[RMDB]
RNA sequence: GGGAACGACUCGAGUAGAGUCGAAAAAAAAAGAUAUGGAUACCCAGAAGGUCGAGGAUCGGACGUAACAUCGAUUUCGGAAACGAAAUCGUGGUCCGGGAGACUGGUGGGUAUCCUAAGUCAAAAACACAUACAAUAACUUCGGUUAUUGUAUGUGAAAAGAAACAACAACAACAAC
Reactivity to DMS in 0.01 (KOAc 150mM, MgCl2 10mM, bicine 150mM(pH8.5), 24C), signal-to-noise 4, nucleotides 027 to 126: a080a060a090a140a120g000a010u000a020u010g000g000a020u000a010c000c010c000a040g020a240a140g020g020u000c000g020a080g020g010a010u010c000g000g000a010c000g010u000a000a010c200a010u000c010g000a000u000u000u000c000g010g000a010a010a020c000g010a020a010a000u000c000g020u000g010g000u000c000c010g000g010g000a010g010a010c000u000g010g030u000g000g000g010u000a000u000c000c000u000a000a040g000u010c000a060a060a070a110a150
Reactivity to 2A3 in 0.01 (KOAc 150mM, MgCl2 10mM, bicine 150mM(pH8.5), 24C), signal-to-noise 3, nucleotides 027 to 126: a000a000a030a030a050g020a020u050a010u060g000g000a000u010a000c000c010c010a060g140a290a090g140g010u030c030g110a300g030g010a010u000c000g010g000a000c000g000u010a000a020c040a300u190c010g000a000u000u010u000c010g000g000a000a000a000c010g000a000a000a000u000c000g010u000g020g000u000c000c020g000g000g000a010g000a000c020u050g140g270u060g010g000g010u000a000u000c000c000u000a000a000g000u000c020a000a020a050a160a070